[RMDB]
RNA sequence: GGGAACGACUCGAGUAGAGUCGAAAAGAUAUGGACAUUUACUUCGAUAAGCUCUGUUCGGAAACGAACAAGAGCUUUUGACGAAGAAAUGUCCUAAGUCAAAGUAUGAUUCUUCGGAAUCAUACAAUCCAAUUGUCUUGUUCGCAAGACAAUUGGAAAAAGAAACAACAACAACAAC
Reactivity to 2A3 in 0.01 (KOAc 150mM, MgCl2 10mM, bicine 150mM(pH8.5), 24C), signal-to-noise 1, nucleotides 027 to 126: g010a000u010a020u070g010g000a000c000a030u010u040u190a300c050u000u010c030g170a240u060a300a020g000c030u000c000u010g000u000u000c000g010g010a000a040a020c000g020a000a000c020a090a020g000a000g000c010u000u000u000u000g050a000c000g040a000a000g000a010a010a000u020g000u000c000c000u010a030a020g000u000c030a100a000a150g000u010a010u000g000a000u020u010c020u030u130c300g180g000a020a000u020c010a010u000a000c050a000a090
Reactivity to DMS in 0.01 (KOAc 150mM, MgCl2 10mM, bicine 150mM(pH8.5), 24C), signal-to-noise 2, nucleotides 027 to 126: g000a020u000a120u000g000g000a020c000a000u000u000u000a170c000u000u000c000g030a150u010a020a040g020c010u000c000u000g010u000u000c010g010g020a030a020a100c010g000a030a010c020a020a110g000a010g000c000u000u000u000u000g000a300c050g000a000a000g000a010a000a000u000g020u000c030c000u000a000a020g010u000c000a110a190a200g010u000a000u000g000a030u010u010c000u000u010c300g030g000a020a000u000c000a000u000a000c020a080a140